[RMDB]
Chemical mapping of a 207-nucleotide RNA with 2A3 and DMS.

RNA sequence: GGGAACGACUCGAGUAGAGUCGAAAACAAACAACCAAUAAAUAAAAAACUAAUCCUGAGUGGGAGGGUUCUAGACAGUGUUAGGUCCUGCAAGUGAAAACUGAAUCUGUAACUGGUGUUGCCACAGUUUGUCCAGUGACUGUUAGCUUGUCCGUUAACUAAAUUACUGCUUCGGCAGUAAUUUAGUAAAAGAAACAACAACAACAAC
Reactivity to 2A3 in 0.01 (KOAc 150mM, MgCl2 10mM, bicine 150mM(pH8.5), 24C), signal-to-noise 2, nucleotides 027 to 156: c050a030a100a020c030a060a070c060c080a090a090u180a100a120a080u190a030a120a030a030a010a060c090u100a110a050u040c010c020u050g060a060g030u000g030g010g040a040g050g000g000u030u010c030u030a070g010a190c070a030g010u010g080u210u070a000g000g010u030c040c020u000g000c040a000a070g000u000g050a040a020a000a000c010u000g000a020a040u070c060u050g060u030a000a030c060u000g000g080u070g060u110u090g040c020c030a030c000a010g010u010u040u080g030u000c020c020a030g030u010g070a010c010u050g020u050u040a000g040c080u010u020g050u040c090c080g100u220u290a010
Reactivity to DMS in 0.01 (KOAc 150mM, MgCl2 10mM, bicine 150mM(pH8.5), 24C), signal-to-noise 1, nucleotides 027 to 156: c060a160a120a130c070a090a240c050c030a040a180u000a060a040a130u050a080a060a120a060a110a110c110u000a080a100u010c010c000u000g000a040g040u010g020g000g010a070g010g010g000u000u050c010u000a120g050a060c010a110g060u010g000u010u000a040g030g020u000c040c000u000g020c060a050a030g010u010g000a040a030a010a060c000u030g010a020a060u000c050u030g040u000a040a040c010u000g000g010u000g020u000u000g000c020c090a030c060a050g010u000u000u010g020u000c060c030a100g020u010g000a080c040u000g060u010u030a090g010c030u010u000g000u010c000c000g020u000u000a070
The 2A3 profile rests on 590 reads. Conditions: 150 mM KOAc, 10 mM MgCl2 and 150 mM bicine (pH 8.5), 24 C. The DMS profile rests on 2,054 reads.